This 177-nucleotide RNA was probed chemically with 2A3 and DMS. The 2A3 profile rests on 2,237 reads. The RNA was probed in 150 mM KOAc, 10 mM MgCl2 and 150 mM bicine (pH 8.5) at 24 C. 2A3 adducts were read by reverse transcription with SuperScript II with manganese. High DMS reactivity at an A or C suggests that its Watson-Crick edge is free.
RNA sequence: GGGAACGACUCGAGUAGAGUCGAAAAGAUAUGGAGGUAAAGCAAGGCCCGAAAGGACUUGGAUUUAGCGUCGGAAACGACGCUUGUCAGUCCUAGUAGCUGGCUGAUGACCUUUACCUCCUAAGUCGAUACAUUCGGAGUUCGCUCCGAAUGUAUCAAAAGAAACAACAACAACAAC
Reactivity to 2A3 in 0.01 (KOAc 150mM, MgCl2 10mM, bicine 150mM(pH8.5), 24C), signal-to-noise 1, nucleotides 027 to 126: g070a040u140a120u090g030g000a000g010g040u000a000a000a040g000c070a090a240g000g000c000c000c000g000a040a010a010g040g030a030c070u250u290g170g000a070u300u300u230a010g000c000g020u000c000g030g060a080a050a020c030g000a000c020g000c010u010u010g000u000c000a000g030u040c000c010u000a000g020u020a020g060c300u200g000g000c010u000g040a300u150g000a010c000c000u030u010u020a000c000c000u000c000c000u000a020a000g020u000c060
Reactivity to DMS in 0.01 (KOAc 150mM, MgCl2 10mM, bicine 150mM(pH8.5), 24C), signal-to-noise 2, nucleotides 027 to 126: g040a080u010a300u000g000g010a010g010g010u000a000a010a020g010c040a090a110g010g010c000c000c020g000a190a210a180g000g010a050c030u000u000g020g000a040u000u010u000a010g020c040g050u000c000g010g010a090a110a190c000g000a010c020g020c000u000u010g010u020c000a070g000u020c010c020u010a070g000u000a130g010c160u000g010g020c000u010g000a040u020g000a110c300c010u000u000u000a000c010c000u000c010c000u010a010a110g020u010c090